[RMDB]
RNA sequence: GGGAACGACUCGAGUAGAGUCGAAAAAUGGCGAUUUCGUCAUGAAGCCGGAUCUCUCCACGCUGCGCCUUGCGCCGUGGCUGGAAAAGACGGCCAUUGUGCUGUGCGAUGUACUGGACCACCAUCAGACGCAUUUUAGUUUCGACUAAAAUGCGUCAAAAGAAACAACAACAACAAC
Reactivity to DMS in 0.01 (KOAc 150mM, MgCl2 10mM, bicine 150mM(pH8.5), 24C), signal-to-noise 3, nucleotides 027 to 126: a020u010g000g000c010g000a240u000u010u000c020g040u000c030a050u010g010a150a160g010c020c000g010g000a110u010c030u010c140u000c000c020a010c180g030c040u000g020c040g000c080c080u010u000g000c090g030c160c040g040u010g000g010c030u000g010g010a040a030a080a080g000a080c030g000g000c020c050a070u000u000g020u010g000c050u010g010u000g020c030g020a110u000g000u010a060c050u000g000g000a120c070c000a050c060c070a050u010c110a180
Reactivity to 2A3 in 0.01 (KOAc 150mM, MgCl2 10mM, bicine 150mM(pH8.5), 24C), signal-to-noise 2, nucleotides 027 to 126: a030u040g000g000c020g090a090u080u160u210c020g080u000c010a020u110g050a020a020g030c030c000g020g040a070u010c020u000c000u000c020c020a010c070g020c020u030g010c000g020c030c010u110u250g050c010g030c040c010g010u010g040g030c020u000g030g000a060a060a000a020g060a020c010g010g000c000c000a080u120u080g040u050g000c050u020g000u040g070c010g040a060u070g010u050a060c010u030g070g030a050c030c030a040c010c000a080u070c040a040
An RNA of 177 nucleotides, treated with DMS and 2A3 and read out base by base. It was measured as part of the RMDB library OK2TST. For DMS the reverse transcriptase was MarathonRT. Conditions: 150 mM KOAc, 10 mM MgCl2 and 150 mM bicine (pH 8.5), 24 C.